[RMDB]
RNA sequence: GGGAACGACUCGAGUAGAGUCGAAAACGACAUGGCUUCGGCCAUGUCGAAAGGACGAGUGAGACCGAAACGGAGGUAGGUCCAACUACCAUCUCACUCAAAAAAUCCGUUUGUUCGCAAACGGAAACGUGAUGGGAGAGUUCGCUCUCCCAUCACGAAAAGAAACAACAACAACAAC
Reactivity to DMS in 0.01 (KOAc 150mM, MgCl2 10mM, bicine 150mM(pH8.5), 24C), signal-to-noise 1, nucleotides 027 to 126: c000g030a020c000a020u000g000g050c010u000u000c200g030g010c010c000a020u000g000u000c000g000a080a060a140g000g030a060c150g010a040g010u000g000a080g010a110c060c000g050a020a020a110c190g000g000a270g010g000u060a040g000g000u010c090c110a120a150c000u000a000c000c000a300u000c000u000c000a000c000u000c020a000a010a050a070a060a060u020c000c000g000u000u000u000g000u000u020c170g000c020a000a020a000c000g000g000a000a010a090